[RMDB]
This 177-nucleotide RNA was probed chemically with DMS and 2A3. The RNA was probed in 150 mM KOAc, 10 mM MgCl2 and 150 mM bicine (pH 8.5) at 24 C. For DMS the reverse transcriptase was MarathonRT. Reactivities are rounded to 0.1 and cut off at 0 and 3.
RNA sequence: GGGAACGACUCGAGUAGAGUCGAAAACGCUGACGCGCCUCAAGCGGCAUAUCCAAAACGUUCACAUGCGCCCCACCAAGGAGCCCGUGUGCAAUAUCUGCAAGCGCGUCUACAGCUCCUUGAAUAGUAAAAUAGUCACGUUCGCGUGACUAUUUUAAAAAGAAACAACAACAACAAC
Reactivity to DMS in 0.01 (KOAc 150mM, MgCl2 10mM, bicine 150mM(pH8.5), 24C), signal-to-noise 4, nucleotides 027 to 126: c140g020c090u010g010a060c020g000c030g030c010c110u020c160a130a180g010c060g000g040c240a060u000a060u030c180c120a080a030a130a120c150g000u020u020c020a000c040a030u000g010c300g000c030c030c000c010a120c230c110a070a080g000g000a050g020c000c060c000g030u000g020u000g010c040a100a030u030a060u020c130u040g000c050a200a150g010c020g010c040g010u000c050u020a120c100a080g000c010u010c010c000u000u010g010a110a090u020a080g010
Reactivity to 2A3 in 0.01 (KOAc 150mM, MgCl2 10mM, bicine 150mM(pH8.5), 24C), signal-to-noise 5, nucleotides 027 to 126: c060g010c020u030g010a020c010g040c000g040c060c030u160c120a110a020g010c030g030g000c040a090u100a060u150c110c070a040a080a040a090c080g050u070u050c040a050c020a050u030g000c010g010c010c010c020c000a090c050c030a040a060g020g000a020g000c000c050c030g010u010g000u010g030c010a030a030u030a080u210c080u070g000c020a040a060g020c000g000c000g020u020c010u020a020c020a020g010c000u010c010c000u010u020g090a140a110u130a100g150